[RMDB]
RNA sequence: GGGAACGACUCGAGUAGAGUCGAAAAGUCUGCUAGACCAACACAUUGAUCUCCUAUUGGUAACCCCAACAAUCCUUCAUCUGUAUAUGCAAUUAUACGAUAGCUAGUUUUUUGGUUAUUUGCCUAUUAACAUUACAAGGUUCGCCUUGUAAUGUUAAAAAGAAACAACAACAACAAC
Reactivity to 2A3 in 0.01 (KOAc 150mM, MgCl2 10mM, bicine 150mM(pH8.5), 24C), signal-to-noise 9, nucleotides 027 to 126: g050u030c030u050g090c060u080a030g020a060c010c020a080a050c040a020c020a110u040u120g070a090u050c020u020c020c010u050a100u040u110g030g000u040a060a090c010c000c010c000a020a030c030a040a060u040c010c010u060u050c010a040u000c030u100g040u030a020u000a010u080g120c070a090a100u160u010a030u040a040c030g010a020u020a040g040c060u030a060g050u050u020u020u020u070u070g060g000u050u030a100u070u080u100g010c000c000u050a100u070
Reactivity to DMS in 0.01 (KOAc 150mM, MgCl2 10mM, bicine 150mM(pH8.5), 24C), signal-to-noise 9, nucleotides 027 to 126: g010u000c020u010g010c060u010a060g010a080c030c030a060a100c120a070c110a070u010u010g010a090u010c040u010c020c020u000a100u010u000g000g020u010a090a120c140c060c010c030a060a070c110a070a090u010c050c030u010u010c050a030u000c030u020g020u010a010u000a020u000g010c160a070a080u010u000a020u000a030c040g000a040u000a040g010c080u000a040g000u000u000u010u010u020u000g010g010u000u000a090u000u000u010g010c110c010u010a090u010
Source: RMDB libraries RFM100 and RFMREP, as collected in RNAgym.
Structure probing data (2A3 and DMS) for a 177-nucleotide construct.
DMS adducts were read by reverse transcription with MarathonRT.
For 2A3 the reverse transcriptase was SuperScript II with manganese.